[RMDB]
RNA sequence: GGGAACGACUCGAGUAGAGUCGAAAAUGUCGAGGUGCCACUCCCUCACCAGCCUAUCGCGGUAGGCGAUCAUCUCGGGGAUCUUGAAACCGGUGUCGAUGUGCACGAGGGGGAACGGCACGUGGCCGUGGGAGUAGACGUUCGCGUCUACUCCCACAAAAGAAACAACAACAACAAC
Reactivity to DMS in 0.01 (KOAc 150mM, MgCl2 10mM, bicine 150mM(pH8.5), 24C), signal-to-noise 1, nucleotides 027 to 126: u010g030u000c040g000a080g020g000u000g000c020c040a200c020u000c000c000c000u000c010a060c130c090a240g000c010c020u000a020u000c020g060c130g010g070u000a030g010g000c140g010a080u000c020a040u010c060u000c110g020g000g000g010a060u000c080u000u040g000a040a110a070c020c010g000g010u000g030u000c020g010a030u000g040u000g000c060a120c090g000a060g000g010g000g000g010a000a080c080g000g000c010a040c040g020u000g010g020c020c250
Reactivity to 2A3 in 0.01 (KOAc 150mM, MgCl2 10mM, bicine 150mM(pH8.5), 24C), signal-to-noise 1, nucleotides 027 to 126: u170g030u030c040g040a050g130g040u000g010c000c010a020c020u000c000c000c000u010c010a050c020c030a020g000c010c000u040a030u070c000g020c090g130g000u010a000g010g040c020g000a000u050c000a010u010c040u100c090g000g020g060g040a060u060c070u090u230g090a110a040a020c000c000g000g000u080g110u100c080g010a020u050g050u060g110c060a040c140g020a020g000g000g000g000g000a100a150c100g000g020c010a000c010g000u040g000g000c030c040